[RMDB]
RNA sequence: GGGAACGACUCGAGUAGAGUCGAAAAGGAGGCUGAGGCUGGAGGAUCGCUUGAGCUCAGGAGUUCUGGGCUGCAGUCCGCUAUGCCGAUCGGGUGUCCGCACUAAGUUCGGUAUCAAUAUGGUGAUCCUCCGGGAGCGGAGGGUUACCAGGUUGCCCUAUUGCAUCUCCUUCGGGAGAUGCAAUAGAAAAGAAACAACAACAACAAC
Reactivity to 2A3 in 0.01 (KOAc 150mM, MgCl2 10mM, bicine 150mM(pH8.5), 24C), signal-to-noise 1, nucleotides 027 to 156: g080g000a000g030g010c030u040g030a000g000g000c010u010g020g020a040g030g000a030u120c060g000c100u090u130g100a000g000c000u010c000a010g100g010a200g070u300u110c010u020g000g010g000c000u060g050c020a010g070u030c000c020g030c040u050a030u220g000c000c000g030a010u010c000g020g000g020u010g070u100c080c010g050c010a030c030u130a150a150g080u070u060c000g030g000u030a040u300c050a080a020u060a080u100g000g000u000g030a030u000c000c000u010c000c010g010g020g020a220g160c030g020g000a000g000g010g010u000u000a000c000c000a000g000g100u050u010g010c000c000

Description: Chemical mapping of a 207-nucleotide RNA with 2A3. The RNA was probed in 150 mM KOAc, 10 mM MgCl2 and 150 mM bicine (pH 8.5) at 24 C.